The record gives the reactivity of an RNA of 177 nucleotides to DMS and 2A3. 2A3 adducts were read by reverse transcription with SuperScript II with manganese.
[RMDB]
RNA sequence: GGGAACGACUCGAGUAGAGUCGAAAAAGCGCGUACGCGCGCAUCGAGGUGACGAUAGAAAUUCACAGGUCUGUCAAUCCACUGAUAUAUGUGAUGUAAUUGUGUUCUCGACAGGUUCUGAUCGAAAUUCAUGUGCAUAGUUCGCUAUGCACAUGAAAAAAGAAACAACAACAACAAC
Reactivity to DMS in 0.01 (KOAc 150mM, MgCl2 10mM, bicine 150mM(pH8.5), 24C), signal-to-noise 4, nucleotides 027 to 126: a060g020c000g000c030g020u000a080c170g050c000g030c010g020c030a060u000c030g020a090g000g010u020g000a060c030g000a030u010a120g000a060a100a060u030u000c030a040c040a030g000g010u000c030u010g000u000c050a100a100u030c180c150a060c070u020g000a050u040a070u030a080u010g010u000g000a050u010g000u000a060a130u010u010g000u000g000u000u000c020u000c020g000a030c100a060g010g010u000u000c040u010g000a080u000c050g000a030a070a110
Reactivity to 2A3 in 0.01 (KOAc 150mM, MgCl2 10mM, bicine 150mM(pH8.5), 24C), signal-to-noise 4, nucleotides 027 to 126: a000g030c020g010c000g030u060a030c220g030c000g000c000g000c120a030u030c020g030a040g060g040u140g060a030c000g030a020u040a160g130a080a130a050u100u030c030a020c000a040g000g080u020c040u030g040u050c030a040a080u040c050c040a030c030u080g070a010u020a030u040a050u160g070u050g030a030u040g040u110a090a060u080u040g070u010g000u110u010c030u020c030g020a020c010a050g080g000u230u090c020u060g080a140u100c060g030a030a030a040
It was measured as part of the RMDB libraries RFM100 and RFMREP.
The RNA was probed in 150 mM KOAc, 10 mM MgCl2 and 150 mM bicine (pH 8.5) at 24 C.